[RMDB]
RNA sequence: GGGAACGACUCGAGUAGAGUCGAAAAAUUUCAAAUAAAAUGCUUUGUGACCCAUUAAUCUCACAUUUGUAUAGGACAGAGUUUAUCCUGUAGAACAGUGUAUAAGUUAUGUGUAUAGAUGGAUAUCUACCAAUUUGCUUUUCGAAGCAAAUUGGUAAAAAGAAACAACAACAACAAC
Reactivity to DMS in 0.01 (KOAc 150mM, MgCl2 10mM, bicine 150mM(pH8.5), 24C), signal-to-noise 2, nucleotides 027 to 126: a090u010u010u000c030a050a050a120u040a090a130a100a060u020g000c130u000u020u000g020u010g020a130c060c040c020a150u010u000a090a110u010c120u000c090a090c040a040u000u000u010g010u000a020u000a110g010g000a010c070a100g000a120g000u010u000u000a060u000c040c000u000g010u000a070g010a070a190c040a040g010u000g020u000a030u010a050a080g000u020u000a110u000g020u000g020u020a000u010a050g010a020u000g000g000a090u020a080u010c080
Source information: This 177-nucleotide RNA was probed chemically with DMS. The RNA was probed in 150 mM KOAc, 10 mM MgCl2 and 150 mM bicine (pH 8.5) at 24 C. Values cover nucleotides 27 to 126. For DMS the reverse transcriptase was MarathonRT.